An RNA of 207 nucleotides, treated with 2A3 and DMS and read out base by base.
[RMDB]
RNA sequence: GGGAACGACUCGAGUAGAGUCGAAAAAAGCAGUUGGCUGAUUGUGCUGCUUGUGCUAUUCACUGUUUCAUUAUCACCAGUUCAAUCAGCACCCAUUGGUCAAGGGAAGACAAUUGAGGCAUACCGGGCCAGGGAAGGGUACACAAGUAUAUGCCUAUACUACUAGUGGUUUCGACCACUAGUAGUAAAAAGAAACAACAACAACAAC
Reactivity to 2A3 in 0.01 (KOAc 150mM, MgCl2 10mM, bicine 150mM(pH8.5), 24C), signal-to-noise 5, nucleotides 027 to 156: a000a020g050c070a030g030u090u090g080g000c000u000g020a010u020u010g010u040g020c010u010g000c030u070u100g040u000g010c050u090a090u170u210c110a080c150u130g130u140u220u150c090a100u050u160a070u140c040a020c040c010a040g000u040u030c000a000a000u000c010a010g000c020a020c010c000c000a030u050u090g010g020u070c110a190a190g000g030g040a040a050g060a060c040a130a020u090u160g050a050g010g010c000a000u010a040c030c010g030g000g010c020c010a020g030g010g040a090a140g040g000g030u040a060c060a000c020a060a120g140u060a060u020a000u160g010c030c010u040a050
Reactivity to DMS in 0.01 (KOAc 150mM, MgCl2 10mM, bicine 150mM(pH8.5), 24C), signal-to-noise 2, nucleotides 027 to 156: a090a050g000c020a080g020u000u010g040g010c000u000g000a020u000u030g010u000g060c000u000g000c110u010u000g060u010g020c100u000a100u000u000c060a170c110u000g000u000u000u000c080a090u020u010a090u000c050a080c110c020a050g000u020u010c020a000a040u000c000a000g040c020a110c030c020c020a160u020u000g000g000u000c040a090a110g000g020g000a110a100g000a100c080a020a140u010u010g020a100g000g030c010a090u000a070c050c000g000g030g030c020c020a070g010g010g000a090a180g000g020g020u000a040c030a080c080a040a080g020u000a120u000a030u000g000c010c030u000a260
For 2A3, 2,397 sequencing reads were counted. Conditions: 150 mM KOAc, 10 mM MgCl2 and 150 mM bicine (pH 8.5), 24 C.